RNA sequence: GGGAACGACUCGAGUAGAGUCGAAAAAUUUGUAGACUGUUCCCACGCCAAUGUUAGGGAUGAACAGCUCCCAGAUUCCGGUCGAGCCGAGGCUCCGCAUAGGGUAUUGGCUGGGGUUCCAUCCGCAAAAUCCUGUUAUAUUCGUAUAACAGGAUUUAAAAGAAACAACAACAACAAC
Reactivity to DMS in 0.01 (KOAc 150mM, MgCl2 10mM, bicine 150mM(pH8.5), 24C), signal-to-noise 8, nucleotides 027 to 126: a110u010u010u010g010u010a100g010a100c060u000g010u000u000c010c020c010a110c210g000c050c050a040a050u000g000u000u010a110g010g000g000a070u000g000a060a050c090a060g000c170u000c020c010c020a140g010a170u000u010c050c030g000g010u000c230g010a040g010c000c030g010a170g020g010c010u000c030c090g010c110a090u010a120g010g000g020u010a040u000u000g010g010c030u000g000g000g000g000u000u000c060c020a120u000c020c030g010c170a080
Reactivity to 2A3 in 0.01 (KOAc 150mM, MgCl2 10mM, bicine 150mM(pH8.5), 24C), signal-to-noise 4, nucleotides 027 to 126: a000u150u140u150g080u080a060g010a130c050u030g020u030u030c010c040c010a020c060g050c030c030a090a060u070g050u190u110a220g010g080g020a030u070g030a100a040c020a060g050c030u060c020c000c000a010g060a110u120u040c060c030g030g010u050c030g030a010g020c020c010g110a100g140g000c010u040c090c020g070c060a070u180a070g060g010g030u080a090u060u050g040g000c000u010g030g000g020g000u060u000c030c000a030u040c020c000g060c050a030